[RMDB]
RNA sequence: GGGAACGACUCGAGUAGAGUCGAAAAUAUGCUCUUUUCCUUCCUUUUCAUGCAUCAGUACUUGGAGGGGUUUAAAUAUUGGUUUGAGCUUGACAUGACACAAAGGAGACUAGGCCGUUUGCAGAGACUCCAUUGCAUUAUUCGUAAUGCAAUGGAGAAAAGAAACAACAACAACAAC
Reactivity to 2A3 in 0.01 (KOAc 150mM, MgCl2 10mM, bicine 150mM(pH8.5), 24C), signal-to-noise 2, nucleotides 027 to 126: u180a060u080g020c010u020c000u080u040u050u070c010c000u020u080c010c010u030u080u030u060c020a030u070g070c010a070u030c000a090g070u110a110c020u030u020g010g010a020g000g000g020g000u000u060u140a080a110a030u210a060u060u070g050g050u030u030u060g030a020g020c000u010u030g020a030c020a050u080g010a010c000a000c010a110a100a010g070g020a030g040a020c040u030a030g030g000c030c020g050u030u050u080g000c010a030g040a020g060a090
Reactivity to DMS in 0.01 (KOAc 150mM, MgCl2 10mM, bicine 150mM(pH8.5), 24C), signal-to-noise 5, nucleotides 027 to 126: u010a070u000g010c020u000c020u010u000u010u000c020c020u000u020c030c000u000u000u010u010c050a040u000g000c100a080u000c150a100g010u000a100c050u000u000g000g010a050g000g000g010g020u000u010u000a060a060a080u010a090u010u000g010g000u000u000u010g000a060g020c020u000u000g010a100c090a060u000g000a080c150a050c120a040a080a080g000g000a090g010a040c080u000a070g000g010c020c060g010u000u000u000g000c070a090g000a110g000a170
Chemical mapping of a 177-nucleotide RNA with 2A3 and DMS.
The DMS profile rests on 5,994 reads.
2A3 adducts were read by reverse transcription with SuperScript II with manganese.
Reactivities are rounded to 0.1 and cut off at 0 and 3.
The RNA was probed in 150 mM KOAc, 10 mM MgCl2 and 150 mM bicine (pH 8.5) at 24 C.